RNA sequence: GGGAACGACUCGAGUAGAGUCGAAAACUGAACCAUGCUGGCCAGGGAGACUGCGACUGCACAGGCAGGACUCACAGCACACAUCUCCUUUUGCUUUCAGAAGUGACCGGGGAGGUGCGUCCUCAUCUGAAGGGGAGGAGUUCGCUCCUCCCCUUCAAAAAGAAACAACAACAACAAC
Reactivity to DMS in 0.01 (KOAc 150mM, MgCl2 10mM, bicine 150mM(pH8.5), 24C), signal-to-noise 2, nucleotides 027 to 126: c080u030g060a110a080c110c110a100u000g010c050u000g000g020c070c150a100g020g000g030a050g010a140c000u020g000c080g000a160c040u000g030c030a040c150a080g000g000c000a040g060g000a130c040u010c020a030c140a060g020c000a180c040a050c060a030u000c000u000c110c020u000u010u000u000g010c010u010u000u020c100a070g000a010a080g020u000g000a020c150c020g000g000g000g000a020g000g000u000g010c000g000u000c020c000u000c010a120u020c070
Reactivity to 2A3 in 0.01 (KOAc 150mM, MgCl2 10mM, bicine 150mM(pH8.5), 24C), signal-to-noise 2, nucleotides 027 to 126: c020u030g030a040a000c050c010a050u160g020c060u060g010g020c060c040a050g000g020g060a010g000a060c000u010g020c040g060a080c010u060g070c020a060c050a160g090g000c010a020g010g070a110c010u000c060a060c070a020g050c010a000c000a000c000a040u040c020u040c000c000u080u060u000u100g010c030u050u080u090c100a090g040a100a030g030u010g050a000c000c050g000g000g000g020a010g050g000u000g000c010g050u070c000c000u030c020a110u000c050

This 177-nucleotide RNA was probed chemically with DMS and 2A3. Values cover nucleotides 27 to 126. For 2A3, 1,165 sequencing reads were counted. It was measured as part of the RMDB library OK1LIB. For DMS, 2,626 sequencing reads were counted. The RNA was probed in 150 mM KOAc, 10 mM MgCl2 and 150 mM bicine (pH 8.5) at 24 C.